[RMDB]
RNA sequence: GGGAACGACUCGAGUAGAGUCGAAAAUGAUCGAGAGAUCUAACGAUGUACGCGAGUCAAGUGCACAGACUCGAGCGAAAGCUCGGUCGAAAGACCGCGUACAUCGGUCGGCGUGUGUACGGUCGACCCUAUGAUAGGCGUUCGCGCCUAUCAUAGGAAAAGAAACAACAACAACAAC
Reactivity to DMS in 0.01 (KOAc 150mM, MgCl2 10mM, bicine 150mM(pH8.5), 24C), signal-to-noise 4, nucleotides 027 to 126: u000g010a010u020c010g010a300g000a250g000a010u000c000u010a100a110c020g010a010u000g000u010a000c010g020c000g000a060g000u000c010a050a100g020u000g000c050a010c070a300g010a010c000u000c010g010a000g000c010g000a110a110a160g020c010u000c010g000g000u000c000g000a080a110a160g000a010c000c010g020c020g010u000a000c020a010u000c000g010g010u010c010g000g000c020g020u010g010u000g000u000a050c030g010g000u000c010g010a180c260
Reactivity to 2A3 in 0.01 (KOAc 150mM, MgCl2 10mM, bicine 150mM(pH8.5), 24C), signal-to-noise 2, nucleotides 027 to 126: u110g000a000u000c010g010a010g010a010g000a100u000c020u020a060a020c030g000a010u010g000u010a000c020g000c000g030a060g010u030c040a070a110g130u050g100c060a050c020a060g010a000c020u060c120g000a010g000c010g070a120a020a000g010c000u010c000g000g020u000c010g010a040a010a000g000a010c010c000g000c000g000u000a000c000a010u000c020g000g000u010c000g000g010c020g010u290g020u050g050u080a040c040g040g020u000c000g010a020c010